The record gives the reactivity of an RNA of 177 nucleotides to 2A3 and DMS.
Source: RMDB library OK1LIB, as collected in RNAgym.
Reactivities are given for positions 27 through 126.
2A3 adducts were read by reverse transcription with SuperScript II with manganese.
The reactions ran in a buffer of 150 mM KOAc, 10 mM MgCl2 and 150 mM bicine (pH 8.5), at 24 C.
The 2A3 profile rests on 606 reads.
RNA sequence: GGGAACGACUCGAGUAGAGUCGAAAAGAAUGUAAGAGCGUAAUCGCGCCUUGACGUGAGUGAGACAAGACAGAAGGCUAUCCAAAGUAAGAUAGCAUAGCUCACAAUACGCUGAUCUGUCCUAGAACGAGUCAGGGAUGUUCGCAUCCCUGACUCGAAAAGAAACAACAACAACAAC
Reactivity to 2A3 in 0.01 (KOAc 150mM, MgCl2 10mM, bicine 150mM(pH8.5), 24C), signal-to-noise 1, nucleotides 027 to 126: g030a100a000u140g000u160a050a050g000a050g000c000g120u110a070a170u130c030g000c000g000c000c000u150u210g060a140c010g000u000g000a000g030u080g000a000g000a150c060a150a000g050a000c000a000g300a220a040g000g030c000u000a000u080c060c060a080a080a050g030u040a160a020g100a000u000a000g010c000a000u110a000g000c000u010c000a000c000a000a000u040a030c000g020c040u060g060a100u000c000u080g010u020c000c000u120a160g000a180a000
Reactivity to DMS in 0.01 (KOAc 150mM, MgCl2 10mM, bicine 150mM(pH8.5), 24C), signal-to-noise 1, nucleotides 027 to 126: g000a040a040u000g000u000a180a030g050a000g060c000g000u000a050a300u040c020g000c070g050c000c130u000u080g000a130c000g000u000g000a000g000u000g000a010g000a020c060a100a050g000a120c300a010g000a280a030g040g000c000u000a000u050c020c040a250a180a110g000u050a210a130g000a000u000a000g000c000a050u080a050g000c020u000c050a000c000a110a140u000a000c080g030c000u010g000a080u000c000u010g000u000c000c000u000a160g020a130a170